[RMDB]
RNA sequence: GGGAACGACUCGAGUAGAGUCGAAAAGACCGCGCCGCCGAGGAGCGAAAGCGCUCCGAAUCGUCUGCGAAUCGACCGCGAAUCGACGACGAUCCGUCGGCCGAAAAUUCUGAACGCCGCUCGAAUCGCGACGCGUUUUCGGAAGAAACCGCAGGUCCCCAGUAAAUGGUUUCGACCAUUUACUGGGAAAAGAAACAACAACAACAAC
Reactivity to 2A3 in 0.01 (KOAc 150mM, MgCl2 10mM, bicine 150mM(pH8.5), 24C), signal-to-noise 3, nucleotides 027 to 156: g020a000c010c020g000c040g010c020c010g010c010c000g040a030g020g020a010g010c020g110a290a160a030g220c080g000c010u000c000c010g020a030a070u030c000g000u000c030u070g010c010g010a030a040u040c010g080a110c040c040g080c040g070a040a040u060c020g030a060c000g010a040c020g020a060u050c010c020g040u040c000g010g040c020c000g080a060a050a020a090u120u030c030u080g030a050a010c020g000c020c010g040c080u070c080g100a140a110u120c070g020c040g040a030c070g020c010g010u000u020u060u020c010g000g000a040a000g020a060a080a030c080c030g000c020a000g010g040u020c030
Reactivity to DMS in 0.01 (KOAc 150mM, MgCl2 10mM, bicine 150mM(pH8.5), 24C), signal-to-noise 1, nucleotides 027 to 156: g000a150c050c020g000c020g020c030c090g020c050c040g040a170g000g000a090g040c040g000a190a070a230g020c070g020c000u000c020c000g020a040a100u020c020g030u000c020u020g050c030g050a110a150u010c030g000a110c040c040g020c060g020a070a080u010c010g030a130c150g010a160c040g000a060u000c030c000g000u000c010g030g000c000c000g040a070a080a130a100u000u010c030u010g020a090a140c040g000c000c010g000c020u010c000g010a160a160u010c170g030c000g010a000c020g000c020g010u000u000u000u000c030g000g000a100a230g000a090a070a060c050c040g040c000a140g010g030u000c020
Structure probing data (2A3 and DMS) for a 207-nucleotide construct. DMS adducts were read by reverse transcription with MarathonRT. 2A3 adducts were read by reverse transcription with SuperScript II with manganese. The reactions ran in a buffer of 150 mM KOAc, 10 mM MgCl2 and 150 mM bicine (pH 8.5), at 24 C. For 2A3, 2,452 sequencing reads were counted. The data come from the RNA Mapping Database (RMDB), library OK3TST.